Structure probing data (2A3 and DMS) for a 177-nucleotide construct. DMS adducts were read by reverse transcription with MarathonRT. 2A3 adducts were read by reverse transcription with SuperScript II with manganese. The RNA was probed in 150 mM KOAc, 10 mM MgCl2 and 150 mM bicine (pH 8.5) at 24 C. Reactivities are rounded to 0.1 and cut off at 0 and 3. It was measured as part of the RMDB library OK2TST.

[RMDB]
RNA sequence: GGGAACGACUCGAGUAGAGUCGAAAACGUCUCUGGGGUGACAACUUCUUCAACGCCAAGAAGAAGGUGUGGGUCAAGACUGCCGAGCACGAGGGAGUCACCCUCCGCCGUGCCUUCUGCCAGUUCAUACACGUCUUGAAUUCGUUCAAGACGUGUAAAAAGAAACAACAACAACAAC
Reactivity to 2A3 in 0.01 (KOAc 150mM, MgCl2 10mM, bicine 150mM(pH8.5), 24C), signal-to-noise 2, nucleotides 027 to 126: c030g100u030c010u000c060u080g000g060g010g000u050g010a020c010a050a030c040u010u000c000u010u010c030a130a070c120g050c110c010a040a060g010a010a000g000a000a000g020g000u020g030u040g010g040g000u020c030a060a050g040a030c040u050g030c050c000g050a040g010c030a010c000g020a100g030g050g020a020g060u100c050a080c040c000c000u020c010c020g300c000c010g010u000g000c020c000u060u080c000u010g040c010c040a040g040u070u070c030a020
Reactivity to DMS in 0.01 (KOAc 150mM, MgCl2 10mM, bicine 150mM(pH8.5), 24C), signal-to-noise 5, nucleotides 027 to 126: c180g010u000c010u010c020u010g000g020g020g040u000g000a060c040a080a110c010u000u000c000u000u000c000a080a120c220g010c190c220a110a080g000a010a020g000a020a020g000g000u000g020u000g000g010g010u000c100a090a090g000a050c020u000g020c070c090g000a100g010c020a020c040g010a130g000g000g000a070g010u010c170a060c210c210c010u000c030c030g010c030c010g000u000g000c030c060u000u000c040u000g010c100c060a040g000u010u010c100a140